[RMDB]
RNA sequence: GGGAACGACUCGAGUAGAGUCGAAAAGAUAUGGACAGAACUACAGGGAACAGACGCGUUGAAAAGUGAAUUGCUUCGGAAACGAAGCAAUUCACUUGGAGCGUCUUAGUACCUGCUGUCCUAAGUCCCUUACACGCUAGUUCGCUAGCGUGUAAGGAAAAGAAACAACAACAACAAC
Reactivity to DMS in 0.01 (KOAc 150mM, MgCl2 10mM, bicine 150mM(pH8.5), 24C), signal-to-noise 1, nucleotides 027 to 126: g000a100u000a300u010g010g020a030c010a070g000a080a000c030u040a300c020a010g010g000g000a250a210c300a050g000a000c060g060c000g000u000u030g020a120a050a000a020g020u000g000a010a010u000u010g010c000u000u010c020g020g000a060a120a210c020g010a020a010g000c000a000a000u000u000c000a010c000u010u010g000g010a020g000c000g030u000c000u000u000a020g000u010a130c000c000u010g030c000u000g020u000c000c010u020a030a130g010u000c020
An RNA of 177 nucleotides, treated with DMS and read out base by base. Source: RMDB library TTRINS, as collected in RNAgym. DMS adducts were read by reverse transcription with MarathonRT. Conditions: 150 mM KOAc, 10 mM MgCl2 and 150 mM bicine (pH 8.5), 24 C.